[RMDB]
RNA sequence: GGGAACGACUCGAGUAGAGUCGAAAAAUAGUUAAGGUUGCGCUUGCCUAUUUAUGCAUACUUCUCAGGAUGGCGCGUUGCAGUCCAACAAGAUCCAGGGACUGUACAGAAUUUUCCUAUACCUCGAAAAACAUUCGCUUGUUCGCAAGCGAAUGAAUCAUACAUCCUCGUUCGCGAGGAUGUAUGAAAAAGAAACAACAACAACAAC
Reactivity to DMS in 0.01 (KOAc 150mM, MgCl2 10mM, bicine 150mM(pH8.5), 24C), signal-to-noise 1, nucleotides 027 to 156: a090u000a050g000u000u000a090a010g040g000u010u020g000c020g010c020u020u000g010c070c000u010a100u000u000u000a090u020g000c040a190u010a050c070u000u000c020u010c070a060g030g030a030u010g000g020c050g050c070g050u000u000g020c000a010g000u030c010c010a070a220c090a050a250g010a210u000c070c000a190g000g030g040a030c080u000g020u000a120c100a050g010a050a100u000u010u000u000c030c030u000a110u010a130c050c020u000c040g000a110a020a070a050a190c000a060u000u000c000g010c000u010u000g000u000u020c300g060c000a050a000g010c000g000a010a000u000g010a060a110
Reactivity to 2A3 in 0.01 (KOAc 150mM, MgCl2 10mM, bicine 150mM(pH8.5), 24C), signal-to-noise 3, nucleotides 027 to 156: a000u150a000g060u060u030a090a030g070g000u050u100g020c020g000c020u070u150g060c030c040u050a090u100u200u050a060u140g070c050a070u080a260c090u160u100c070u010c060a040g080g000a060u100g000g000c010g000c020g030u020u100g010c000a000g000u000c020c000a050a040c040a230a080g070a170u070c090c040a000g010g000g000a000c020u000g000u000a020c030a010g050a040a050u050u040u030u090c000c000u040a020u050a130c040c130u090c120g070a090a070a030a060a010c030a000u000u000c010g000c000u010u000g030u070u050c150g030c180a000a000g020c000g000a000a000u000g000a000a000